[RMDB]
RNA sequence: GGGAACGACUCGAGUAGAGUCGAAAACAGGCUGGUAGAAAUCUAGAAGUGAGUCUUUGGGGCCUGAGCUGAGAUUGUAGGCGUGUAAAUGCGAAGAGAUUUCAAAGAUGAGAUUCUGAGAUUUAAACGAUUAGUAAUCGUUCGCGAUUACUAAUCGAAAAGAAACAACAACAACAAC
Reactivity to DMS in 0.01 (KOAc 150mM, MgCl2 10mM, bicine 150mM(pH8.5), 24C), signal-to-noise 5, nucleotides 027 to 126: c080a070g010g050c050u010g010g030u000a090g020a050a050a060u000c030u000a040g010a070a040g010u010g010a280g010u000c030u000u000u000g020g010g000g020c030c020u000g000a230g010c030u010g000a140g010a100u000u000g010u010a100g010g010c050g000u000g000u000a060a070a100u000g010c030g010a170a060g000a100g010a070u000u000u000c010a030a040a070g000a050u010g010a220g010a060u000u000c020u000g000a120g010a050u000u000u000a060a110a180
Reactivity to 2A3 in 0.01 (KOAc 150mM, MgCl2 10mM, bicine 150mM(pH8.5), 24C), signal-to-noise 3, nucleotides 027 to 126: c020a010g140g000c020u060g040g100u110a070g130a080a070a020u010c020u010a040g020a050a020g090u070g050a030g020u040c000u030u040u080g010g020g030g000c000c000u010g000a010g040c020u050g050a020g020a160u120u150g050u150a060g000g080c080g010u040g000u030a110a160a020u110g020c010g000a050a020g020a010g020a090u040u080u050c040a030a030a000g020a040u060g000a020g000a040u050u000c010u070g110a060g020a020u060u040u100a100a100a020
The record gives the reactivity of an RNA of 177 nucleotides to DMS and 2A3.
For DMS, 4,843 sequencing reads were counted.
It was measured as part of the RMDB library OK2TST.
DMS adducts were read by reverse transcription with MarathonRT.
2A3 adducts were read by reverse transcription with SuperScript II with manganese.
Reactivities are given for positions 27 through 126.